RNA sequence: GGGAACGACUCGAGUAGAGUCGAAAAUGUAGCAAGGAAGUAACUAUGCUAGUUAAUUCUGUGCAAGGCUCACAAAUGCUCUUCUUUGGUGAGGAAGCAAUGGGUGUUUUGCUAGGCCCAUCAGUGAAACGCGCUACGAGUUCGCUCGUAGCGCGUUAAAAGAAACAACAACAACAAC
Reactivity to DMS in 0.01 (KOAc 150mM, MgCl2 10mM, bicine 150mM(pH8.5), 24C), signal-to-noise 1, nucleotides 027 to 126: u030g040u000a060g000c070a040a180g010g000a040a110g010u000a050a040c030u000a170u000g050c110u000a000g000u000u000a020a060u000u000c000u000g030u000g020c030a050a030g000g000c020u000c010a020c060a000a060a160u000g000c000u010c000u000u000c000u000u000u000g000g030u000g020a050g000g000a130a040g030c030a030a200u000g000g000g000u000g000u000u040u000u000g070c040u000a130g000g010c030c000c000a160u000c100a090g010u000g040a060